[RMDB]
RNA sequence: GGGAACGACUCGAGUAGAGUCGAAAAUUACAUAAGUCUAACACCUUGUUUCGGACUAACAAGGGCGCAUGGAGGAUGGCCGUCCCUCCAUAGUUAGACGUCCGAGAACCAGCCGAAAUGAAAAAGAGAGUGGAUAUGGUUUCGACCAUAUCCACUCAAAAGAAACAACAACAACAAC
Reactivity to DMS in 0.01 (KOAc 150mM, MgCl2 10mM, bicine 150mM(pH8.5), 24C), signal-to-noise 1, nucleotides 027 to 126: u080u000a060c180a120u000a070a120g000u000c010u000a040a010c030a210c050c020u000u000g030u050u000u000c070g000g020a080c090u010a050a040c000a000a050g000g000g090c170g050c120a050u000g030g010a000g020g000a090u020g010g000c020c000g040u010c210c000c000u000c000c000a030u000a000g000u010u040a040g030a050c010g010u000c050c020g000a040g000a020a150c060c040a030g000c050c050g000a090a140a040u020g020a050a040a150a020a090g000a250
Reactivity to 2A3 in 0.01 (KOAc 150mM, MgCl2 10mM, bicine 150mM(pH8.5), 24C), signal-to-noise 3, nucleotides 027 to 126: u140u120a110c070a110u160a100a050g010u040c020u000a000a040c020a030c030c010u000u000g000u010u030u090c180g100g120a200c080u000a000a020c000a000a020g000g020g030c100g000c030a020u000g000g030a000g000g000a000u070g050g000c050c020g000u010c000c000c000u020c000c000a000u010a010g010u000u020a010g000a030c000g020u000c000c030g040a030g000a090a060c040c000a010g060c030c030g010a000a020a100u130g070a060a150a030a030a020g150a010

An RNA of 177 nucleotides, treated with DMS and 2A3 and read out base by base.
The reactions ran in a buffer of 150 mM KOAc, 10 mM MgCl2 and 150 mM bicine (pH 8.5), at 24 C.
The DMS profile rests on 1,808 reads.
For 2A3, 2,061 sequencing reads were counted.
Reactivities are given for positions 27 through 126.
The data come from the RNA Mapping Database (RMDB), library OK1LIB.